[RMDB]
RNA sequence: GGGAACGACUCGAGUAGAGUCGAAAAGGUGGGUGUUCCGCCCCCCGAGAGGGGAAGAGUGAGGCUUAUCCCGGGGAACUCGACUUAUCGUCCCCACAUAGCAGUUUCCAGGACCCCCUUCCAAAAACCACCCGGCCGUUCGCGGCCGGGAAAAGAAACAACAACAACAAC
Reactivity to 2A3 in 0.01 (KOAc 150mM, MgCl2 10mM, bicine 150mM(pH8.5), 24C), signal-to-noise 1, nucleotides 027 to 129: g050g000u010g010g000g020u000g130u080u050c000c030g000c000c000c020c000c010c020g130a130g050a060g090g100g000g020a050a050g010a010g120u180g050a000g030g110c070u140u050a000u050c000c040c000g020g020g000g020a020a000c000u040c050g110a080c050u290u090a020u130c170g040u070c000c000c000c000a010c000a020u000a000g000c000a000g020u100u090u000c040c000a000g000g000a110c070c000c000c020c000u000u100c000c000a080a000a000a000a000c000c000a000
This 170-nucleotide RNA was probed chemically with 2A3. Reactivities are rounded to 0.1 and cut off at 0 and 3. Conditions: 150 mM KOAc, 10 mM MgCl2 and 150 mM bicine (pH 8.5), 24 C. The 2A3 profile rests on 1,198 reads.